[RMDB]
RNA sequence: GGGAACGACUCGAGUAGAGUCGAAAAGAGUACACAGAAAAGAUGCGAAAAUGCGUGCGAACUGGAAACAGAAGCAUCGAAAAGUAGUGGAAAGCACGCGUAACACUACGAAAUGUGUACGAAGAAAGGGUAUACUAAAGUUCGCUUUAGUAUACCCAAAAGAAACAACAACAACAAC
Reactivity to 2A3 in 0.01 (KOAc 150mM, MgCl2 10mM, bicine 150mM(pH8.5), 24C), signal-to-noise 5, nucleotides 027 to 126: g100a010g000u010a000c000a000c010a000g050a020a090a000a020g010a000u000g010c040g070a110a070a010a060u050g010c000g010u000g000c010g030a230a050c080u140g030g050a040a060a030c030a020g060a110a010g000c000a000u000c000g010a000a000a030a070g000u000a000g000u010g050g080a100a040a020g000c010a000c000g000c000g010u020a010a010c000a000c000u000a000c000g000a000a040a020u020g000u010g000u000a000c010g000a030a010g090a070a060a020
Reactivity to DMS in 0.01 (KOAc 150mM, MgCl2 10mM, bicine 150mM(pH8.5), 24C), signal-to-noise 6, nucleotides 027 to 126: g000a280g000u010a000c010a030c000a030g010a120a090a130a110g010a000u000g010c000g000a150a040a130a080u020g000c000g000u010g010c000g030a080a140c020u010g010g000a130a110a160c010a000g000a130a130g020c000a000u000c000g020a070a030a070a120g010u000a010g000u000g000g000a080a100a100g000c000a010c010g010c010g000u010a060a130c000a010c000u010a000c010g000a040a060a110u000g000u010g000u010a000c000g020a120a100g000a060a060a110
This 177-nucleotide RNA was probed chemically with 2A3 and DMS.
The reactions ran in a buffer of 150 mM KOAc, 10 mM MgCl2 and 150 mM bicine (pH 8.5), at 24 C.
The data come from the RNA Mapping Database (RMDB), library OK1LIB.